[RMDB]
An RNA of 177 nucleotides, treated with DMS and 2A3 and read out base by base. The 2A3 profile rests on 1,053 reads. The DMS profile rests on 1,033 reads. For DMS the reverse transcriptase was MarathonRT. The RNA was probed in 150 mM KOAc, 10 mM MgCl2 and 150 mM bicine (pH 8.5) at 24 C. Source: RMDB library 15KREP, as collected in RNAgym. Reactivities are given for positions 27 through 126.
RNA sequence: GGGAACGACUCGAGUAGAGUCGAAAAAAAGGACCUGAAAUCCGAUAUCUCUAUUUUGUUAAAAAUCUUAACAACCUUCAUCGCGGGCAAGUGUUAGGGCACAUUGCUGCGACUGUUAGAUUGCAAGCUAUAGAGUAGCGUUCGCGCUACUCUAUAGAAAAGAAACAACAACAACAAC
Reactivity to DMS in 0.01 (KOAc 150mM, MgCl2 10mM, bicine 150mM(pH8.5), 24C), signal-to-noise 2, nucleotides 027 to 126: a070a090a120g000g010a010c010c040u000g040a140a080a300u000c000c000g010a170u010a090u020c010u010c010u010a150u000u000u000u030g000u000u030a020a030a020a060a060u010c030u000u020a040a070c000a000a100c080c050u000u010c160a090u010c000g000c030g000g000g000c000a050a020g000u000g010u000u010a110g020g020g020c030a040c020a100u000u000g020c010u010g000c000g020a030c250u010g010u000u000a010g020a030u000u010g000c080a060a050g000
Reactivity to 2A3 in 0.01 (KOAc 150mM, MgCl2 10mM, bicine 150mM(pH8.5), 24C), signal-to-noise 1, nucleotides 027 to 126: a020a000a050g040g000a020c050c060u050g030a050a030a030u020c000c000g000a010u010a070u140c000u000c000u000a100u040u110u010u080g040u010u050a000a080a060a030a010u020c020u070u030a030a020c000a010a040c020c010u120u070c030a070u020c010g000c020g080g030g000c010a000a010g010u020g000u070u120a180g050g090g000c010a010c070a200u000u030g000c000u010g000c000g020a000c050u020g030u020u020a020g000a040u050u080g000c040a040a020g010